[RMDB]
RNA sequence: GGGAACGACUCGAGUAGAGUCGAAAAGCGAGGGUGAACGUCUAAUUGAAUCAUUUAUGUUAAUUGCAAAUGAAACAGUUGCUGAACAUUUUAGUAAGUUAAAUGUACCUUUUAUUUACCGAGUGCAACCUCCUGUACGAUUCGUCGUACAGGAGGUAAAAGAAACAACAACAACAAC
Reactivity to 2A3 in 0.01 (KOAc 150mM, MgCl2 10mM, bicine 150mM(pH8.5), 24C), signal-to-noise 5, nucleotides 027 to 126: g080c050g020a040g020g020g010u030g050a040a000c010g010u010c020u060a020a090u070u050g050a050a030u050c040a060u060u080u170a160u040g050u010u110a180a150u270u190g010c030a010a020a030u070g050a070a090a050c060a050g030u010u020g000c030u020g020a060a040c030a040u020u050u040u060a090g020u050a110a140g010u010u100a040a070a020u100g020u110a070c000c000u040u020u050u060a100u060u110u030a080c010c040g040a030g060u080g060c020a040
Reactivity to DMS in 0.01 (KOAc 150mM, MgCl2 10mM, bicine 150mM(pH8.5), 24C), signal-to-noise 3, nucleotides 027 to 126: g020c110g020a030g010g020g020u000g000a020a030c030g010u020c060u000a030a040u010u020g020a080a220u010c040a030u010u000u010a020u010g010u020u000a060a060u020u020g000c030a020a020a030u020g010a070a050a200c130a080g000u000u000g020c040u020g000a040a060c020a040u000u010u000u000a060g000u010a020a020g000u000u000a000a010a020u020g000u010a040c050c010u000u030u010u040a080u020u020u000a080c020c060g010a070g030u020g010c170a090